[RMDB]
RNA sequence: GGGAACGACUCGAGUAGAGUCGAAAAUGUGAUGGCAUUGAGUUAUAUUGUGGUGGGGUUUAUUGUUGUGAUCAUGAAUUAUAAAAACAUUCCAUCGGUGAUUACCCUUAUUUUUAGCAGUGCAUUCCACAGCACUUAAGUUCGCUUAAGUGCUGUGAAAAGAAACAACAACAACAAC
Reactivity to DMS in 0.01 (KOAc 150mM, MgCl2 10mM, bicine 150mM(pH8.5), 24C), signal-to-noise 3, nucleotides 027 to 126: u000g010u010g000a080u010g010g010c030a030u010u000g000a110g000u010u000a070u000a090u000u010g010u000g020g040u000g010g010g020g010u000u010u010a050u010u000g020u000u000g020u000g020a030u000c090a100u010g000a070a070u000u010a100u010a020a080a070a070a080c090a060u010u000c020c060a040u000c060g000g040u000g010a070u000u010a090c040c040c010u000u000a070u000u010u000u010u020a090g030c070a050g000u000g010c100a140u000u000c050